Record summary:
Structure probing data (DMS) for a 177-nucleotide construct. The RNA was probed in 150 mM KOAc, 10 mM MgCl2 and 150 mM bicine (pH 8.5) at 24 C.
RNA sequence: GGGAACGACUCGAGUAGAGUCGAAAACCGUAUCGGUUCGCCGAUACGGAAAAGUUAAUGCUGCUAACACACAUCUUAAGCAUGGCGCUGGUAUCGCUGGUGGGACUCCCCAGUUCGCUGGGGAGAAUAGGAUACUUUCGUUCGCGAAAGUAUCCUAAAAAGAAACAACAACAACAAC
Reactivity to DMS in 0.01 (KOAc 150mM, MgCl2 10mM, bicine 150mM(pH8.5), 24C), signal-to-noise 1, nucleotides 027 to 126: c010c000g010u010a010u000c000g010g040u010u020c230g030c000c000g010a010u000a010c000g000g010a030a020a060a220g010u000u000a000a100u000g000c050u000g000c110u010a090a140c060a100c080a120c080a070u010c020u000u020a090a040g010c040a070u000g000g020c060g000c040u010g060g000u010a080u000c060g000c020u020g050g000u000g010g000g000a180c010u000c000c010c010c010a020g000u000u030c140g000c020u010g000g000g030g010a000g000a010a030